[RMDB]
About this RNA: Chemical mapping of a 207-nucleotide RNA with 2A3. It was measured as part of the RMDB library OK3TST. The RNA was probed in 150 mM KOAc, 10 mM MgCl2 and 150 mM bicine (pH 8.5) at 24 C.

RNA sequence: GGGAACGACUCGAGUAGAGUCGAAAAUGGUCAUCAUCGUCAGCAGUGUGGCCUCAGUGGAGCUGACCAUUGACACCACAACAGUGAUGGCGACGCAGGAUUACGUUGAUGACAAAAUUGCAGAGCACGAACAGUCACGACGUCACCCGGACGCCUCGUUACAGCCACCUUUCGAGGUGGCUGUAACAAAAGAAACAACAACAACAAC
Reactivity to 2A3 in 0.01 (KOAc 150mM, MgCl2 10mM, bicine 150mM(pH8.5), 24C), signal-to-noise 1, nucleotides 027 to 156: u090g020g000u000c020a050u000c000a030u050c080g080u040c140a040g000c070a110g090u020g010u020g060g020c060c040u000c010a030g010u080g060g020a100g070c010u070g080a250c000c020a040u040u040g000a040c030a030c030c000a010c010a190a050c020a070g070u020g110a090u110g020g010c010g000a000c030g000c060a030g050g080a110u000u050a030c000g000u000u030g110a300u000g010a000c010a000a100a040a100u030u060g080c040a080g040a060g160c070a010c080g040a130a010c010a120g010u000c000a000c000g000a000c000g070u050c030a010c000c000c050g000g000a050c040g070c160c000u030c030